[RMDB]
RNA sequence: GGGAACGACUCGAGUAGAGUCGAAAAAAAUAACAGUAUAGAGCGCAAGAGUCUAGCUAGUAAGUAGGAUUCUCAUAAGGAAUCAUUUCCACUAUGAAUCUAGUCACUAAAUAAACACAAUUAGCUACCCUUUAACAGGAUUCGUCCUGUUAAAGGGAAAAGAAACAACAACAACAAC
Reactivity to 2A3 in 0.01 (KOAc 150mM, MgCl2 10mM, bicine 150mM(pH8.5), 24C), signal-to-noise 6, nucleotides 027 to 126: a000a000a000u240a060a030c050a010g040u070a060u060a130g070a020g010c050g000c070a100a000g010a020g100u030c020u060a020g010c000u010a020g010u020a080a060g000u000a030g090g070a030u040u000c070u010c030a110u100a090a070g030g010a000a010u030c010a030u090u080u030c030c010a040c010u030a030u080g030a030a020u030c010u010a020g030u050c030a010c100u150a070a070a160u180a050a160a000c080a020c050a070a150u120u040a030g040c020u070a070
Reactivity to DMS in 0.01 (KOAc 150mM, MgCl2 10mM, bicine 150mM(pH8.5), 24C), signal-to-noise 4, nucleotides 027 to 126: a020a020a050u010a060a080c120a050g000u010a100u000a040g030a060g010c050g010c100a070a060g020a110g010u010c040u020a070g000c030u000a020g000u000a040a150g000u000a060g000g000a030u010u010c010u000c080a110u040a120a210g000g000a010a030u020c020a100u010u020u010c040c020a300c060u000a000u000g000a140a090u000c010u000a030g010u000c070a100c120u000a000a040a060u070a080a030a050c120a050c130a040a050u000u000a050g000c070u010a180